Chemical mapping of a 177-nucleotide RNA with 2A3 and DMS. The 2A3 profile rests on 52,161 reads. 2A3 adducts were read by reverse transcription with SuperScript II with manganese. DMS adducts were read by reverse transcription with MarathonRT. The reactions ran in a buffer of 150 mM KOAc, 10 mM MgCl2 and 150 mM bicine (pH 8.5), at 24 C. It was measured as part of the RMDB library OK2TST.

RNA sequence: GGGAACGACUCGAGUAGAGUCGAAAAGUCACUUCGUUGCCCGCACCAAUCGGUAUCACCGGGUGAUACUGUUCGGCACGUUUGAUGUAGUAGUCACUGAGCGUCUGUGCGGCUUUCGAUGCGCCGCGAUGUCAUGUUAUUUCGAUAACAUGACAUCAAAAGAAACAACAACAACAAC
Reactivity to 2A3 in 0.01 (KOAc 150mM, MgCl2 10mM, bicine 150mM(pH8.5), 24C), signal-to-noise 9, nucleotides 027 to 126: g030u030c020a020c120u040u040c050g080u060u060g040c020c020c020g000c010a050c000c050a070a140u150c030g010g000u010a020u040c010a020c080c160g300g030g020u010g000a010u020a020c010u030g040u110u100c050g030g000c010a010c040g010u010u040u080g060a070u050g010u060a070g030u030a010g030u040c020a020c090u050g030a020g040c010g020u010c050u080g090u060g020c000g000g010c010u070u110u070c070g050a060u090g060c050g010c020c020g030c060
Reactivity to DMS in 0.01 (KOAc 150mM, MgCl2 10mM, bicine 150mM(pH8.5), 24C), signal-to-noise 9, nucleotides 027 to 126: g010u010c060a060c080u000u000c040g020u000u000g010c100c010c040g010c110a100c070c130a090a050u010c030g010g010u000a020u000c020a030c030c240g020g020g010u000g000a020u000a010c010u000g010u000u000c130g010g010c070a040c050g010u000u000u000g010a050u000g010u000a090g010u010a100g010u000c030a050c100u000g000a060g020c050g010u000c050u000g010u010g010c020g000g000c020u000u000u000c100g010a090u000g010c160g010c020c050g020c100